[RMDB]
RNA sequence: GGGAACGACUCGAGUAGAGUCGAAAAAAGCACGGGAAAGAGGAGGAGGAGUUGUUACUGGAUAGCGAUGCGGACAGCAAUGUCGACAGUGGUGACUAUAGGACAUUGUUCGGAAGUGUAAGGAGGCAUCCGCUGACUCAUUCGUGAGUCAGCGGAUAAAAGAAACAACAACAACAAC
Reactivity to DMS in 0.01 (KOAc 150mM, MgCl2 10mM, bicine 150mM(pH8.5), 24C), signal-to-noise 2, nucleotides 027 to 126: a050a090g060c020a070c120g030g020g000a040a020a030g010a080g000g000a090g000g040a090g020g000a090g000u000u000g030u030u010a120c020u040g000g000a090u010a130g000c060g000a090u010g010c120g000g020a200c080a030g000c090a020a000u000g000u000c020g020a220c260a040g010u010g000g000u060g000a060c010u000a130u010a130g020g000a020c040a020u000u030g040u020u030c100g000g000a100a110g000u000g020u030a060a030g000g000a020g000g030c150
Reactivity to 2A3 in 0.01 (KOAc 150mM, MgCl2 10mM, bicine 150mM(pH8.5), 24C), signal-to-noise 3, nucleotides 027 to 126: a000a000g130c080a020c070g020g000g000a160a060a030g020a050g060g010a030g030g040a080g010g010a070g000u010u020g010u020u060a110c060u070g050g000a110u020a050g050c020g000a050u040g030c010g040g030a020c000a000g000c010a020a010u030g020u050c020g030a020c020a060g030u100g070g070u100g120a020c030u040a080u150a150g010g010a000c000a000u010u030g000u010u010c060g080g010a000a060g080u040g020u100a090a060g060g030a010g000g090c040
An RNA of 177 nucleotides, treated with DMS and 2A3 and read out base by base. The 2A3 profile rests on 1,223 reads. It was measured as part of the RMDB library OK1LIB. Reactivities are given for positions 27 through 126. The RNA was probed in 150 mM KOAc, 10 mM MgCl2 and 150 mM bicine (pH 8.5) at 24 C.